[RMDB]
RNA sequence: GGGAACGACUCGAGUAGAGUCGAAAAGUAAUAGAUAACUGGAUGCAGCGUAGGUAUCAACGCAUAUCCAGUACGAAUGGUACCUGUAAAUAAAAUAUGGUACCUAGUACAAGUACCAACAGAAGGAUAAGCGAUGGUGAUGUCAAUCACAUUUGCAACGUGAGGUUUUAUUCGUAAAACCUCACGUAAAAGAAACAACAACAACAAC
Reactivity to DMS in 0.01 (KOAc 150mM, MgCl2 10mM, bicine 150mM(pH8.5), 24C), signal-to-noise 1, nucleotides 027 to 156: g020u010a100a170u020a040g010a100u010a090a090c010u010g010g000a040u000g010c170a070g120c010g010u000a040g020g000u000a040u000c070a200a080c040g070c020a220u000a080u010c000c000a020g040u010a070c080g010a180a130u010g020g010u000a020c000c000u010g010u000a120a070a120u000a140a050a140a120u000a110u000g000g010u000a010c010c020u010a030g010u000a000c090a040a060g040u000a090c040c030a060a160c120a080g000a040a040g000g000a070u010a020a100g000c040g000a060u010g000g040u020g040a050u000g010u010c150a060a100u020c030a040c030a170u000u000u000g000c070a150
Reactivity to 2A3 in 0.01 (KOAc 150mM, MgCl2 10mM, bicine 150mM(pH8.5), 24C), signal-to-noise 3, nucleotides 027 to 156: g020u060a040a080u110a190g130a070u090a200a080c030u040g010g000a020u020g090c170a090g000c110g040u050a050g050g110u130a040u270c080a070a010c000g000c000a000u010a000u130c000c000a000g000u000a000c000g030a040a060u070g000g010u030a040c010c030u010g040u090a000a100a140u200a040a110a100a020u110a030u040g000g000u000a000c000c010u000a010g010u000a000c020a010a010g020u000a070c000c050a010a040c030a060g170a170a000g090g040a070u010a060a090g010c020g020a020u020g080g030u030g010a040u010g040u120c000a050a030u040c010a020c020a040u070u070u220g020c030a090
The record gives the reactivity of an RNA of 207 nucleotides to DMS and 2A3.
The reactions ran in a buffer of 150 mM KOAc, 10 mM MgCl2 and 150 mM bicine (pH 8.5), at 24 C.